[RMDB]
RNA sequence: GGGAACGACUCGAGUAGAGUCGAAAAACGAGUCCGUACGCGGACUCGAAGGGCCCCAGAAGACCAAGGGGCCCAAACCUACCACUCAUUAGAUGCAUGGAAAUCAAUAGGUGAUACGUCACCUAGAACACGCUUUUAAGCUUCGGCUUAAAAGCAACAGCGACUAAUUCUUCGGAAUUAGUCGCUGAAAAGAAACAACAACAACAAC
Reactivity to 2A3 in 0.01 (KOAc 150mM, MgCl2 10mM, bicine 150mM(pH8.5), 24C), signal-to-noise 1, nucleotides 027 to 156: a000c010g000a000g000u020c000c000g000u000a050c260g000c000g090g000a000c000u000c000g000a020a020g000g000g010c030c020c040c000a020g100a210a070g010a080c200c140a110a110g000g010g000g000c000c000c020a030a000a000c000c020u030a080c000c000a030c040u110c060a140u040u160a090g100a140u140g100c110a060u100g070g100a020a070a160u030c070a170a030u010a050g000g000u000g030a000u010a100c260g030u000c010a000c000c000u000a000g000a070a030c150a000c040g010c000u010u010u000u000a000a000g000c010u010u070c100g090g070c000u000u000a000a000a000a000g010c040a000a000